[RMDB]
RNA sequence: GGGAACGACUCGAGUAGAGUCGAAAAGGUAAGUUUCGACUUACCGCUACGAUAUGGAUUCCCGAAGGAGUGAUGACCUGGGUCACAGUCGGAAACGAUCACAGCCCAGCAAGCUCUCAAGGGAAUCCUAAGUCUGAAGACCAACUUCGGUUGGUAACUAGCAGGUAUUUUUCGAAAUACCUGCUAGAAAAGAAACAACAACAACAAC
Reactivity to DMS in 0.01 (KOAc 150mM, MgCl2 10mM, bicine 150mM(pH8.5), 24C), signal-to-noise 3, nucleotides 027 to 156: g020g030u000a020a000g000u000u020u000c190g030a130c000u000u010a010c010c000g010c050u000a060c040g000a120u010a300u030g000g000a060u020u010c000c000c010g010a290a120g010g000a080g030u010g010a170u000g000a100c300c020u000g010g000g030u000c070a110c220a180g060u000c000g030g010a120a130a220c010g010a030u000c060a170c160a120g010c020c010c000a030g020c000a060a270g000c010u000c020u000c020a000a300g000g010g000a020a000u010c000c010u000a000a050g000u010c040u020g010a080a160g010a140c000c020a020a050c020u000u000c190g020g020u000u010g000g020u010a020a120
Reactivity to 2A3 in 0.01 (KOAc 150mM, MgCl2 10mM, bicine 150mM(pH8.5), 24C), signal-to-noise 4, nucleotides 027 to 156: g010g000u000a000a020g000u030u100u300c220g110a050c010u010u000a000c000c000g000c010u090a060c090g030a030u020a030u120g010g000a000u000u000c000c000c000g050a140a030g020g000a010g000u040g070a280u120g060a100c020c010u000g000g000g040u110c040a030c060a090g010u000c010g010g030a100a070a060c020g000a020u130c020a000c040a070g000c000c000c020a000g000c000a050a030g000c000u010c010u010c050a040a040g000g000g000a000a000u000c000c000u000a000a010g010u000c050u080g120a100a020g050a060c020c000a000a000c020u030u070c160g120g000u010u010g010g000u020a020a090
The data come from the RNA Mapping Database (RMDB), library RNAMAK.
This 207-nucleotide RNA was probed chemically with DMS and 2A3.
Reactivities are given for positions 27 through 156.
The reactions ran in a buffer of 150 mM KOAc, 10 mM MgCl2 and 150 mM bicine (pH 8.5), at 24 C.
For DMS, 3,975 sequencing reads were counted.